[RMDB]
RNA sequence: GGGAACGACUCGAGUAGAGUCGAAAAAUCUUUUGUUCAUUUUGCAUGUCGAGCUCCUGCUCUCUUUCAUUGAUUAAACCCAUCACUUUUCUUCUGUUAAUCAACUUAGUGAUGAAAUUCAGCUCGAGCGAGUCCUAUCAUUCGUGAUAGGACUCGCAAAAGAAACAACAACAACAAC
Reactivity to 2A3 in 0.01 (KOAc 150mM, MgCl2 10mM, bicine 150mM(pH8.5), 24C), signal-to-noise 2, nucleotides 027 to 126: a000u070c060u010u120u000u010g140u130u080c140a240u170u000u000u040g030c040a070u080g040u070c010g040a000g000c010u020c000c010u000g010c000u040c000u000c000u020u130u120c070a120u000u140g030a000u060u200a130a080a090c000c010c000a070u090c030a050c010u000u250u130u120c010u240u000c030u000g140u250u110a170a120u140c020a000a080c000u050u010a000g000u010g030a050u020g100a020a020a020u180u100c000a000g000c000u030c010g040a000
The record gives the reactivity of an RNA of 177 nucleotides to 2A3. For 2A3, 571 sequencing reads were counted.